The record gives the reactivity of an RNA of 177 nucleotides to 2A3 and DMS. 2A3 is a SHAPE reagent: it acylates the 2'-hydroxyl of flexible nucleotides of all four kinds.
[RMDB]
RNA sequence: GGGAACGACUCGAGUAGAGUCGAAAAGAUAUGGACAUGACGGUAUUUGCCGUACUAUUACCUGCUACGUCGGAAACGACGUAGCAGGUAACGAAUACGGAACUACAAAGACGAAGUGUCCUAAGUCCAAGAAAGUAGUGUUCGCACUACUUUCUUGAAAAGAAACAACAACAACAAC
Reactivity to 2A3 in 0.01 (KOAc 150mM, MgCl2 10mM, bicine 150mM(pH8.5), 24C), signal-to-noise 2, nucleotides 027 to 126: g020a040u140a080u200g010g020a000c020a020u050g000a010c010g050g130u300a120u050u020u020g040c020c010g000u020a010c040u050a030u050u030a010c010c000u010g000c000u010a000c000g020u000c000g070g090a000a190a090c000g040a000c000g000u000a000g000c040a000g000g000u020a000a000c010g010a000a000u030a000c000g000g020a020a020c050u260a090c230a020a040a010g030a000c010g000a060a020g010u000g010u030c000c000u020a100a020g040u000c000
Reactivity to DMS in 0.01 (KOAc 150mM, MgCl2 10mM, bicine 150mM(pH8.5), 24C), signal-to-noise 6, nucleotides 027 to 126: g000a080u010a300u000g000g020a020c000a020u000g000a300c020g010g000u020a170u000u000u000g000c000c000g000u010a000c090u010a300u000u000a000c000c010u000g000c000u000a010c000g000u000c000g020g000a130a090a250c000g020a020c000g020u000a000g010c000a000g000g000u000a000a010c060g010a090a140u000a000c010g000g010a090a030c110u010a300c000a010a010a040g000a250c050g000a120a300g020u000g000u000c000c000u000a050a150g010u000c050